Source information
An RNA of 177 nucleotides, treated with 2A3 and DMS and read out base by base. For 2A3 the reverse transcriptase was SuperScript II with manganese. For DMS the reverse transcriptase was MarathonRT. The reactions ran in a buffer of 150 mM KOAc, 10 mM MgCl2 and 150 mM bicine (pH 8.5), at 24 C.
[RMDB]
RNA sequence: GGGAACGACUCGAGUAGAGUCGAAAAGUCGUUUCUAACAAAAACUAACAAUUGUUAUUGCUGUCUAAGCUUCAAAAGGGUAAUUUUAAAAUGGGAAGUUAAAGAACAAUUGGAGGAUGACGAUGUGCAUGUAUAAUAGCUUCGGCUAUUAUACAUGAAAAGAAACAACAACAACAAC
Reactivity to 2A3 in 0.01 (KOAc 150mM, MgCl2 10mM, bicine 150mM(pH8.5), 24C), signal-to-noise 9, nucleotides 027 to 126: g010u000c000g000u000u000u000c020u050a060a030c060a020a100a020a010a020c050u090a040a020c020a040a080u040u030g020u040u040a100u090u130g120c020u020g030u080c040u080a070a090g010c000u050u060c080a070a060a040a030g090g010g050u100a120a260u060u080u080u150a100a170a060a060u140g090g010g010a030a020g020u080u130a130a060a040g060a040a010c010a040a020u010u020g020g010a020g050g030a050u100g030a010c070g030a050u080g020u070g080
Reactivity to DMS in 0.01 (KOAc 150mM, MgCl2 10mM, bicine 150mM(pH8.5), 24C), signal-to-noise 8, nucleotides 027 to 126: g010u000c010g010u000u000u000c010u000a100a100c160a050a070a070a100a090c100u030a060a250c060a030a050u000u000g010u000u010a050u010u000g010c020u000g010u010c030u010a100a130g000c020u000u010c040a050a040a080a130g010g000g010u020a030a050u020u020u020u030a020a050a090a070u010g010g000g000a050a030g010u000u010a040a060a070g000a030a010c030a010a050u000u000g000g010a130g000g010a060u010g010a080c140g010a090u020g020u010g000